[RMDB]
RNA sequence: GGGAACGACUCGAGUAGAGUCGAAAAGGCAGACGUACUCGUCCAAGUCUGCCACAGUUGGUGGGUUUUUACCUUUUGCUCUUUUGAGCUCCGACUGACGUACGUCGGACGGGUAUACGUACGGAAAGGGUGGCAGGUAGUUCGCUACCUGUUACCCAAAAGAAACAACAACAACAAC
Reactivity to 2A3 in 0.01 (KOAc 150mM, MgCl2 10mM, bicine 150mM(pH8.5), 24C), signal-to-noise 9, nucleotides 027 to 126: g010g000c000a000g000a010c000g020u040a030c010u000c000g010u000c010c000a060a010g020u000c000u000g000c000c000a020c000a000g010u010u010g020g030u070g010g040g030u030u030u010u110u200a070c010c000u060u060u120u130g000c000u010c000u050u220u100u300g010a010g000c000u000c010c010g020a020c000u010g020a010c020g020u070a010c020g050u050c080g020g000a000c000g000g000g000u050a060u010a020c050g030u000a010c030g030g000a090a040a030
Reactivity to DMS in 0.01 (KOAc 150mM, MgCl2 10mM, bicine 150mM(pH8.5), 24C), signal-to-noise 8, nucleotides 027 to 126: g010g010c010a020g010a010c030g010u010a040c030u000c020g000u000c020c030a110a300g000u000c000u000g010c010c030a060c070a020g000u000u010g000g010u030g000g000g010u010u020u030u010u030a050c020c000u000u020u020u020g000c000u000c000u010u040u020u040g000a010g000c000u010c030c040g000a050c070u010g010a160c070g020u010a030c060g000u010c160g000g010a020c040g000g000g000u000a060u030a040c060g010u010a040c020g000g010a080a100a110
Chemical mapping of a 177-nucleotide RNA with 2A3 and DMS. The RNA was probed in 150 mM KOAc, 10 mM MgCl2 and 150 mM bicine (pH 8.5) at 24 C. The 2A3 profile rests on 19,101 reads. The DMS profile rests on 43,246 reads. 2A3 adducts were read by reverse transcription with SuperScript II with manganese.